[RMDB]
RNA sequence: GGGAACGACUCGAGUAGAGUCGAAAAGAUAUGGACGAAUCCGUUGCUCUUUGAUCGACCGUCGGAAACGACGGUCGGGAGAGCGAACGGAGUUCGUCCUAAGUCAAAAUCGCUGUUCGCAGCGAAAGUUAUGACCCUUGUUCGCAAGGGUCAUAACAAAAGAAACAACAACAACAAC
Reactivity to DMS in 0.01 (KOAc 150mM, MgCl2 10mM, bicine 150mM(pH8.5), 24C), signal-to-noise 2, nucleotides 027 to 126: g010a060u000a300u000g000g010a030c000g000a040a080u000c000c000g040u000u000g020c000u000c000u000u000u020g010a130u010c010g010a020c000c000g000u020c000g020g000a100a140a270c020g020a000c000g010g000u000c000g010g000g000a020g010a020g010c000g000a020a020c000g020g010a020g000u000u000c000g010u000c000c000u000a010a060g000u010c060a160a110a140a170u010c000g040c020u000g050u000u000c220g030c030a010g010c010g000a000a050a150
Reactivity to 2A3 in 0.01 (KOAc 150mM, MgCl2 10mM, bicine 150mM(pH8.5), 24C), signal-to-noise 2, nucleotides 027 to 126: g020a020u100a040u220g000g000a000c000g000a010a010u040c010c000g010u010u020g000c020u010c010u080u230u090g190a250u220c020g020a010c000c000g000u000c000g040g060a100a050a060c010g000a000c010g010g010u000c010g000g010g010a010g000a000g010c080g020a010a000c040g000g000a000g020u000u000c000g000u000c000c000u000a030a000g020u000c040a030a010a030a300u070c000g000c000u000g030u110u120c300g050c150a030g020c010g060a090a020a020